[RMDB]
RNA sequence: GGGAACGACUCGAGUAGAGUCGAAAAUAAGGAGGGGUGAACCGGCCCAGGUCGGAAACGGAGCAGGUCAAAACUCUCGUGCUGAUCAGUAGUGGGAUCGCGCCUGUGAAUAGCCACUGUACUCCAGCCUGGGCAACAUAGCGAGACCCCGUCUCUUCUAUAAGUAGGAGUUCGCUCCUACUUAUAGAAAAGAAACAACAACAACAAC
Reactivity to 2A3 in 0.01 (KOAc 150mM, MgCl2 10mM, bicine 150mM(pH8.5), 24C), signal-to-noise 2, nucleotides 027 to 156: u170a030a040g120g060a050g000g000g000g000u040g030a100a050c030c010g010g000c000c000c010a000g000g010u060c030g020g020a060a070a040c040g010g000a040g030c030a010g000g010u080c060a050a050a060a210c060u050c020u020c020g050u040g020c020u140g000a090u100c050a060g120u150a030g080u070g010g060g000a020u020c050g020c010g000c040c030u040g020u020g030a070a160u100a120g020c020c000a050c050u060g010u050a040c040u010c010c000a000g000c000c000u000g000g010g010c000a000a010c020a000u050a000g050c000g000a020g020a060c000c000c000c000g000u000c000u000c000u010u000
The record gives the reactivity of an RNA of 207 nucleotides to 2A3. Source: RMDB library ARCHII, as collected in RNAgym. 2A3 adducts were read by reverse transcription with SuperScript II with manganese. Conditions: 150 mM KOAc, 10 mM MgCl2 and 150 mM bicine (pH 8.5), 24 C.